[RMDB]
RNA sequence: GGGAACGACUCGAGUAGAGUCGAAAACACCAGAGAACGGCUGGCCCAGGCCAUCGGCAUUCCGGAGCCCAGGGUCCAGAUUUGGUUUCAGAAUGAGAGGUCACGCCAGCUGAGGCAGCACCGGCGGCAUUACGCCCAUAUUCGUAUGGGCGUAAUGAAAAGAAACAACAACAACAAC
Reactivity to 2A3 in 0.01 (KOAc 150mM, MgCl2 10mM, bicine 150mM(pH8.5), 24C), signal-to-noise 4, nucleotides 027 to 126: c040a030c010c030a030g010a000g010a200a060c040g020g010c020u000g000g000c030c000c030a070g020g040c010c020a250u050c010g190g040c040a080u200u040c020c010g020g000a010g010c020c020c030a070g040g020g060u010c040c000a050g000a090u040u050u130g040g000u000u060u030c020a020g020a050a040u050g020a050g010a010g050g020u020c030a010c080g010c000c010a020g010c020u030g030a050g100g010c020a020g020c010a020c010c050g030g010c010g020g000
Reactivity to DMS in 0.01 (KOAc 150mM, MgCl2 10mM, bicine 150mM(pH8.5), 24C), signal-to-noise 9, nucleotides 027 to 126: c130a180c030c020a120g000a140g000a090a110c050g020g010c010u000g010g000c010c110c120a260g010g000c010c020a070u000c040g010g020c220a110u000u000c020c030g010g000a090g010c030c000c140a070g010g000g010u000c040c040a040g010a120u010u000u000g010g000u000u010u000c020a070g000a050a040u000g000a230g000a070g000g010u010c030a150c230g000c020c010a050g010c030u000g000a080g010g000c040a040g010c040a100c060c040g000g000c050g000g010
Source: RMDB library OK2TRN, as collected in RNAgym. An RNA of 177 nucleotides, treated with 2A3 and DMS and read out base by base. The DMS profile rests on 13,637 reads. As a SHAPE reagent, 2A3 marks flexible, mostly unpaired nucleotides at the ribose 2'-OH. DMS (dimethyl sulfate) methylates the pairing face of unpaired adenines and cytosines.